The record gives the reactivity of an RNA of 170 nucleotides to 2A3 and DMS.
For DMS the reverse transcriptase was MarathonRT.
Reactivities are given for positions 27 through 129.
For 2A3 the reverse transcriptase was SuperScript II with manganese.
It was measured as part of the RMDB library 15KLIB.
The RNA was probed in 150 mM KOAc, 10 mM MgCl2 and 150 mM bicine (pH 8.5) at 24 C.
RNA sequence: GGGAACGACUCGAGUAGAGUCGAAAAUAUUAGCUCGUAAACAUGGCACUUGUUGUACUACAAGGGACAGAUUUUAUCGCUUGGCAAAUGAGUGUGCUCAGGUGCUAAGCGAAUAUGUUCUAUGUGGGAAUCCUUCACUUCGGUGAAGGAAAAAGAAACAACAACAACAAC
Reactivity to 2A3 in 0.01 (KOAc 150mM, MgCl2 10mM, bicine 150mM(pH8.5), 24C), signal-to-noise 7, nucleotides 027 to 129: u210a050u140u200a060g020c010u020c110g150u170a010a070a060c090a110u130g060g020c020a010c060u020u040g010u000u040g020u030a030c010u010a030c010a110a260g020g000g010a010c010a020g100a080u040u060u050u130a140u100c010g000c000u000u000g000g000c010a010a020a040u010g000a000g020u230g050u190g230c000u000c010a000g050g000u060g010c010u000a000a000g020c000g000a000a010u020a000u000g020u000u010c010u030a080u120g020u030g000g000g000a020a030
Reactivity to DMS in 0.01 (KOAc 150mM, MgCl2 10mM, bicine 150mM(pH8.5), 24C), signal-to-noise 6, nucleotides 027 to 129: u000a100u000u050a110g030c040u010c100g040u070a070a160a110c120a070u020g000g050c090a000c170u060u010g070u010u010g000u030a100c040u020a010c000a040a300g010g040g020a020c050a000g010a040u060u040u080u050a060u040c000g040c020u020u060g020g030c000a010a080a040u020g000a030g030u000g030u080g070c020u010c020a030g030g030u040g020c020u040a000a000g040c010g000a020a030u000a060u020g000u000u030c010u020a170u000g020u030g040g010g010a080a070